[RMDB]
RNA sequence: GGGAACGACUCGAGUAGAGUCGAAAACGCCACCGGGACGCCACCGAGCUUGCCCUUGACGAGGUCGGCGGCCGCGGCGAGUUCGUCGGCGAUCGCGACCUGGGUGACGUGCAGCUCGUUGCCCUGAGCCAUUUUAGCAGUUCGCUGCUAAAAUGGCAAAAGAAACAACAACAACAAC
Reactivity to DMS in 0.01 (KOAc 150mM, MgCl2 10mM, bicine 150mM(pH8.5), 24C), signal-to-noise 1, nucleotides 027 to 126: c070g030c000c000a110c190c060g030g010g020a100c030g020c090c050a070c130c000g000a010g020c040u020u020g030c000c030c090u020u010g010a060c040g000a040g000g050u030c010g050g060c030g020g010c050c000g000c110g030g010c030g010a180g060u020u000c020g030u000c030g000g040c000g000a040u010c000g070c020g020a060c040c030u000g000g040g020u000g020a030c090g000u040g030c070a080g010c010u000c000g000u000u000g000c010c020c000u000g000a150
Reactivity to 2A3 in 0.01 (KOAc 150mM, MgCl2 10mM, bicine 150mM(pH8.5), 24C), signal-to-noise 1, nucleotides 027 to 126: c100g060c000c000a090c060c030g000g010g040a000c120g090c070c000a040c070c010g010a030g040c050u090u220g010c050c000c020u020u090g090a020c050g030a030g040g000u010c060g150g160c030g020g000c010c010g000c000g000g000c040g000a100g290u210u300c030g000u020c030g190g090c010g010a060u010c000g020c020g000a020c030c000u060g110g020g070u040g040a030c050g000u060g000c000a010g010c020u010c020g010u020u070g080c000c010c010u020g010a010

Chemical mapping of a 177-nucleotide RNA with DMS and 2A3. For DMS, 1,237 sequencing reads were counted. The reactions ran in a buffer of 150 mM KOAc, 10 mM MgCl2 and 150 mM bicine (pH 8.5), at 24 C. It was measured as part of the RMDB library OK2TST. 2A3 adducts were read by reverse transcription with SuperScript II with manganese.